[RMDB]
RNA sequence: GGGAACGACUCGAGUAGAGUCGAAAAUCCUAAGUCUUCGGAAUCGCAGAUAUCCCUUUGUCAGCUUAGUCGGAAACGACUAAGCUUGGAUUUAAGGGAUGUAGAUUUGAAGAUAUGGAAAAAGAGUAGCUAAGUUUGUUCGCAAACUUAGCUACUCCUUGGAUUGUCGAUUCGUCGACAAUCCAAGAAAAGAAACAACAACAACAAC
Reactivity to DMS in 0.01 (KOAc 150mM, MgCl2 10mM, bicine 150mM(pH8.5), 24C), signal-to-noise 1, nucleotides 027 to 156: u000c000c020u000a010a200g010u020c010u000u000c020g030g010a000a040u000c000g020c240a200g050a100u000a020u010c000c000c000u000u000u020g020u000c000a080g020c000u000u000a010g020u000c000g000g000a300a220a300c000g050a020c000u000a000a020g020c000u000u010g010g010a050u000u020u000a030a020g020g040g000a020u000g000u000a100g020a070u000u010u020g000a070a050g010a050u000a270u020g010g020a110a070a080a170a210g020a030g010u000a010g000c000u000a020a040g020u000u000u000g010u020u000c300g000c000a020a010a040c000u000u000a000g000c000u000a000c010u000c000
Reactivity to 2A3 in 0.01 (KOAc 150mM, MgCl2 10mM, bicine 150mM(pH8.5), 24C), signal-to-noise 2, nucleotides 027 to 156: u020c010c000u040a100a050g030u030c010u030u000c040g150g050a040a020u000c020g000c110a060g060a200u090a070u150c010c000c020u000u000u000g000u010c010a000g010c010u010u010a000g000u000c000g010g010a050a110a100c020g000a010c000u000a000a010g020c010u020u050g020g000a020u210u070u130a000a000g010g000g000a000u000g000u020a000g000a000u010u000u070g000a000a000g010a000u040a100u110g040g060a010a060a030a070a060g010a000g000u010a000g000c000u010a000a000g000u020u000u020g080u060u090c220g000c180a000a000a000c000u000u000a000g000c000u000a000c000u000c000
The data come from the RNA Mapping Database (RMDB), library RNAMAK. The record gives the reactivity of an RNA of 207 nucleotides to DMS and 2A3. The RNA was probed in 150 mM KOAc, 10 mM MgCl2 and 150 mM bicine (pH 8.5) at 24 C.